Structure probing data (2A3 and DMS) for a 177-nucleotide construct.
As a SHAPE reagent, 2A3 marks flexible, mostly unpaired nucleotides at the ribose 2'-OH.
The 2A3 profile rests on 12,002 reads.
For 2A3 the reverse transcriptase was SuperScript II with manganese.
For DMS the reverse transcriptase was MarathonRT.
RNA sequence: GGGAACGACUCGAGUAGAGUCGAAAAGAUAUGGAAUCAGUAUGUAGCAACAGCUCGGAAACGAGACAUGCUAUAUACGAUUCCUAAGUCAAACAUCUUACAGGAGCUUCGGCUCCUGUAAGAUGAACACUAAAUGACGGUUCGCCGUCAUUUAGUGAAAAGAAACAACAACAACAAC
Reactivity to 2A3 in 0.01 (KOAc 150mM, MgCl2 10mM, bicine 150mM(pH8.5), 24C), signal-to-noise 4, nucleotides 027 to 126: g030a000u080a020u180g010g010a000a000u010c050a080g010u010a010u020g010u000a000g000c020a020a140c060a170g020c030u020c010g040g040a110a080a050c010g010a010g030a050c020a030u060g000c000u000a000u010a000u000a010c000g000a000u000u000c000c000u010a080a010g050u020c030a040a080a070c000a000u000c000u010u000a000c000a010g000g000a020g020c010u120u230c300g190g000c010u030c000c010u000g000u000a000a000g000a000u000g000a000a000
Reactivity to DMS in 0.01 (KOAc 150mM, MgCl2 10mM, bicine 150mM(pH8.5), 24C), signal-to-noise 6, nucleotides 027 to 126: g000a030u010a300u010g010g010a010a000u000c000a070g030u000a000u000g000u000a010g010c000a020a080c280a200g010c010u000c000g000g000a100a070a190c000g000a020g000a020c100a190u000g010c000u000a010u000a010u000a000c010g000a000u000u000c000c010u000a020a070g010u000c030a140a110a250c010a010u000c000u000u000a000c000a010g000g000a010g020c000u000u020c270g050g010c000u000c000c000u000g000u000a000a000g000a000u000g000a040a160